Description:
The record gives the reactivity of an RNA of 177 nucleotides to 2A3 and DMS. For 2A3 the reverse transcriptase was SuperScript II with manganese. It was measured as part of the RMDB library OK2TRN. The RNA was probed in 150 mM KOAc, 10 mM MgCl2 and 150 mM bicine (pH 8.5) at 24 C.

RNA sequence: GGGAACGACUCGAGUAGAGUCGAAAAUGAUCGAGAGAUCUAAAUAUGUACGCGAGUCAAGUGCACAGACUCGAGCGAAAGCUCGGUCGAAAGACCGCGUACAUGUUGCGGCAAGUGUACAGUCGAAGGCUAAUAUAUCAUUCGUGAUAUAUUAGCCAAAAGAAACAACAACAACAAC
Reactivity to 2A3 in 0.01 (KOAc 150mM, MgCl2 10mM, bicine 150mM(pH8.5), 24C), signal-to-noise 5, nucleotides 027 to 126: u080g010a000u010c010g010a000g000a010g000a110u000c000u020a020a030a000u070a010u010g000u000a000c010g000c000g010a010g020u010c030a180a210g030u020g020c020a010c000a030g000a000c010u010c050g000a000g010c010g060a140a010a000g000c000u000c010g010g000u000c000g010a020a020a010g000a000c010c000g000c000g000u000a000c000a000u000g000u000u050g060c020g010g000c030a190a230g010u010g000u030a030c010a010g020u010c020g030a090a050
Reactivity to DMS in 0.01 (KOAc 150mM, MgCl2 10mM, bicine 150mM(pH8.5), 24C), signal-to-noise 9, nucleotides 027 to 126: u010g000a010u000c000g010a300g000a240g000a010u000c000u000a060a030a010u000a010u000g000u000a000c000g020c010g010a030g000u000c000a040a070g020u000g000c020a010c030a300g000a010c000u000c000g010a000g010c000g010a130a090a170g010c000u000c000g010g010u000c000g000a100a080a130g000a010c000c000g010c000g010u000a000c000a000u000g010u000u000g010c030g010g000c020a040a050g010u000g000u000a020c020a300g000u000c010g010a150a160